[RMDB]
RNA sequence: GGGAACGACUCGAGUAGAGUCGAAAAAACGAUGGCAUAUAACUGUAUUUCGUCUGGAGAGUCAAGUGAGGACUAUGAAGCACAAUGCGAUAUCUUCUGGUUAUAUGGCGAAUUUGCUUACUGGGCACCUACCUUCUGAAUUCGUUCAGAAGGUAGGAAAAGAAACAACAACAACAAC
Reactivity to 2A3 in 0.01 (KOAc 150mM, MgCl2 10mM, bicine 150mM(pH8.5), 24C), signal-to-noise 9, nucleotides 027 to 126: a000a010c150g040a110u160g070g000c020a010u030a000u020a060a020c020u020g050u140a130u030u120u040c060g080u010c060u040g060g010a090g010a010g060u030c020a090a090g050u060g160a100g060g080a020c020u040a060u270g090a080a030g040c040a030c030a120a090u130g030c030g020a010u030a100u070c080u110u010c040u090g000g000u020u010a030u010a010u040g090g000c030g060a080a110u050u050u090g020c020u010u030a080c060u100g020g020g000c010a020
Reactivity to DMS in 0.01 (KOAc 150mM, MgCl2 10mM, bicine 150mM(pH8.5), 24C), signal-to-noise 6, nucleotides 027 to 126: a050a050c130g000a120u020g010g020c010a030u010a030u010a050a030c040u000g010u020a070u000u010u000c050g030u010c080u000g000g010a120g000a040g010u000c020a070a130g020u010g000a110g010g010a060c080u000a090u000g000a080a080g010c080a070c110a070a060u030g000c160g000a050u020a060u000c080u000u010c050u020g000g000u000u000a010u000a020u000g010g000c020g010a060a080u000u020u010g010c030u000u010a070c120u000g010g000g010c110a180
Overview:
Structure probing data (2A3 and DMS) for a 177-nucleotide construct.